Annotation: Structure probing data (DMS and 2A3) for a 177-nucleotide construct. The RNA was probed in 150 mM KOAc, 10 mM MgCl2 and 150 mM bicine (pH 8.5) at 24 C. 2A3 adducts were read by reverse transcription with SuperScript II with manganese.
RNA sequence: GGGAACGACUCGAGUAGAGUCGAAAAUUCGCCUUCAAAGGAAUAAAUUCCAUUAAGAAAAGGUAAAAAGAAAAAUCUAUUCACUGAACUUACUGAUAGGAUUUGCAAAUGUGUCAAGUGCAUCAAGAAUAAUAACAACUUUCGAGUUGUUAUUAUUAAAAGAAACAACAACAACAAC
Reactivity to DMS in 0.01 (KOAc 150mM, MgCl2 10mM, bicine 150mM(pH8.5), 24C), signal-to-noise 6, nucleotides 027 to 126: u010u000c040g000c000c010u010u040c180a040a030a060g000g000a050a050u010a070a100a110u020u000c020c010a100u020u000a080a120g000a100a070a100a100g010g000u010a050a040a060a110a080g010a020a080a080a070a060u020c020u010a080u010u000c030a040c080u010g000a110a160c090u010u010a060c130u020g000a060u010a110g000g000a030u000u010u010g020c120a050a080a080u020g010u010g010u000c040a030a070g010u000g000c060a050u010c080a040a090g000
Reactivity to 2A3 in 0.01 (KOAc 150mM, MgCl2 10mM, bicine 150mM(pH8.5), 24C), signal-to-noise 4, nucleotides 027 to 126: u010u010c020g030c000c000u100u110c140a110a050a050g050g010a010a010u070a080a090a030u140u020c020c010a030u130u150a110a040g050a080a140a010a010g020g020u090a040a040a050a030a020g150a010a120a020a010a040u040c050u080a070u100u110c040a020c050u030g140a170a020c010u050u060a020c010u090g030a060u060a080g040g010a020u020u040u090g000c020a010a050a130u130g130u010g060u120c040a030a100g070u010g080c010a020u030c010a020a050g040